[RMDB]
RNA sequence: GGGAACGACUCGAGUAGAGUCGAAAAGAUGCAAGCGUUACGCCUGAGCGCCAAGCCCACGUCUUUACCUACGUGAUGGAUGUUCUUGCGCGUGGCAUGAAGUUCACGGAUAAGACCGAGGCACGCAUCGUGGCUAAACUUUCGAGUUUAGCCACGAAAAAGAAACAACAACAACAAC
Reactivity to 2A3 in 0.01 (KOAc 150mM, MgCl2 10mM, bicine 150mM(pH8.5), 24C), signal-to-noise 2, nucleotides 027 to 126: g070a000u080g010c030a000a060g000c020g060u080u050a040c060g020c020c070u120g040a030g050c020g000c030c020a060a030g020c000c000c050a020c040g030u000c020u030u120u120a120c010c020u040a050c030g050u030g020a050u070g050g070a050u160g080u120u000c020u000u070g020c100g000c010g060u050g050g000c020a020u090g000a020a000g060u100u050c030a020c000g060g010a060u040a100a030g030a020c000c030g030a040g050g030c020a010c060g030c000a020
Reactivity to DMS in 0.01 (KOAc 150mM, MgCl2 10mM, bicine 150mM(pH8.5), 24C), signal-to-noise 4, nucleotides 027 to 126: g000a070u000g020c050a140a140g000c050g010u000u000a100c200g010c030c050u010g020a090g000c020g010c030c060a070a130g000c030c030c000a170c300g000u000c030u040u000u040a110c140c070u000a080c060g020u010g010a060u000g010g000a100u010g000u010u000c030u000u010g010c140g010c080g010u000g000g000c020a060u020g010a060a120g020u000u000c030a030c010g000g000a090u000a030a030g000a050c030c050g010a180g010g020c030a060c090g010c020a080